[RMDB]
RNA sequence: GGGAACGACUCGAGUAGAGUCGAAAAGAUAUGGAUGGCAAAGACAUGCUACUCGGAAACGAGAUAGCAACAGCUUUGGCCAUCCUAAGUCAAAAGCGUACAGAGCGGUUCGCCGCUCUGUACGCAAUCGAAAACCAAACUUCGGUUUGGUUUUCGAAAAAGAAACAACAACAACAAC
Reactivity to DMS in 0.01 (KOAc 150mM, MgCl2 10mM, bicine 150mM(pH8.5), 24C), signal-to-noise 1, nucleotides 027 to 126: g010a030u000a300u000g010g010a030u000g000g030c010a010a000a000g000a110c060a180u000g010c000u000a020c000u000c000g010g000a040a040a120c020g010a000g000a200u000a010g020c000a010a010c280a110g010c010u010u000u000g000g020c040c000a020u000c000c010u000a000a060g010u010c010a080a120a110a180g010c010g000u000a000c000a030g000a030g040c000g010g010u000u000c290g010c020c010g060c000u030c000u010g000u000a000c000g010c000a000a000
Structure probing data (DMS) for a 177-nucleotide construct. It was measured as part of the RMDB library TTRDEL. The RNA was probed in 150 mM KOAc, 10 mM MgCl2 and 150 mM bicine (pH 8.5) at 24 C. Values cover nucleotides 27 to 126.